[RMDB]
RNA sequence: GGGAACGACUCGAGUAGAGUCGAAAAACACCAAAACUGAAAACGGAAGGCAAUCCUUCCACGACGAUACUUACUUUCCUUUGAUCGUCGUUACUACUGGCAUAGCCACAAAGGAGAACAAACAAGAGCGCGGACACUGACUUCGGUCAGUGUCCAAGCCUCCCUGCACCUUCGGGUGCAGGGAGGCAAAAGAAACAACAACAACAAC
Reactivity to 2A3 in 0.01 (KOAc 150mM, MgCl2 10mM, bicine 150mM(pH8.5), 24C), signal-to-noise 1, nucleotides 027 to 156: a010c040a080c020c040a040a050a000a170c090u120g090a090a020a020a160c090g000g010a000a000g040g020c090a020a250u300c000c000u000u000c000c010a000c000g000a030c010g020a000u080a150c020u260u000a120c020u090u120u070c000c010u180u000u000g000a000u000c030g020u000c000g000u030u060a000c010u020a020c040u000g000g010c050a190u040a180g050c000c000a040c010a010a050a000g010g000a010g020a040a060c060a090a150a000c080a040a090g050a070g120c180g000c100g080g000a000c000a000c000u000g000a000c000u020u020c060g010g000u010c020a000g000u000g040u000c000c000a000a000